This 177-nucleotide RNA was probed chemically with DMS and 2A3. DMS adducts were read by reverse transcription with MarathonRT. 2A3 adducts were read by reverse transcription with SuperScript II with manganese.
RNA sequence: GGGAACGACUCGAGUAGAGUCGAAAAGGCAUCGACCUGGGGCUGGAAGUGCAGUUCGAACUCGCCGCGCGCCAGGGCCAGGCGCAGAUCGUUCUCCAUGCGCAGACGGGCGCUGGCGGCGUCCUGCAUUGACUCCUCGUUUCGACGAGGAGUCAAUAAAAGAAACAACAACAACAAC
Reactivity to DMS in 0.01 (KOAc 150mM, MgCl2 10mM, bicine 150mM(pH8.5), 24C), signal-to-noise 1, nucleotides 027 to 126: g040g000c010a080u000c120g030a110c050c030u000g030g000g000g020c030u010g010g030a120a080g020u010g000c050a020g000u000u000c060g000a100a190c100u010c070g020c040c020g000c080g010c020g010c010c000a050g020g000g030c000c020a120g000g000c000g020c030a020g010a190u010c000g010u000u000c000u000c000c070a150u000g000c020g000c000a100g020a240c120g000g010g000c000g000c010u010g000g000c000g000g000c000g000u000c030c030u000g000c090
Reactivity to 2A3 in 0.01 (KOAc 150mM, MgCl2 10mM, bicine 150mM(pH8.5), 24C), signal-to-noise 1, nucleotides 027 to 126: g010g010c000a080u030c030g060a080c000c010u040g010g000g100g050c040u100g070g080a150a070g100u030g040c040a020g000u040u040c020g020a010a020c060u020c120g020c000c000g020c000g020c000g030c000c000a010g040g060g000c040c000a060g030g000c000g020c000a010g010a080u150c060g020u000u000c010u000c020c000a040u020g000c000g010c000a010g060a300c140g100g030g050c160g030c090u030g030g000c000g000g010c010g010u000c010c010u020g000c010